[RMDB]
RNA sequence: GGGAACGACUCGAGUAGAGUCGAAAAGAUAUGGAUUCACCGAGCUGAUGUGAAUAGUGAUGACCUUAACCGUGUCGGAAACGACACACUAAGCAAGCUACACAUCAGCUCGGUGAAUCCUAAGUCAGUUAUUAAAAGCCUUCGGGCUUUUAAUAACAAAAGAAACAACAACAACAAC
Reactivity to DMS in 0.01 (KOAc 150mM, MgCl2 10mM, bicine 150mM(pH8.5), 24C), signal-to-noise 1, nucleotides 027 to 126: g040a040u020a300u000g000g000a010u010u020c000a010c040c030g000a010g000c000u000g020a010u000g020u000g020a130a180u000a020g020u000g020a120u000g020a100c300c000u000u010a000a110c260c250g000u000g010u010c010g020g010a110a080a290c020g000a010c000a000c010a050c090u000a000a000g000c000a020a280g000c010u010a080c030a040c060a010u020c010a000g000c000u000c000g010g050u000g010a000a010u010c000c000u010a010a050g010u000c050a190
This 177-nucleotide RNA was probed chemically with DMS. The DMS profile rests on 779 reads. The RNA was probed in 150 mM KOAc, 10 mM MgCl2 and 150 mM bicine (pH 8.5) at 24 C. Values cover nucleotides 27 to 126.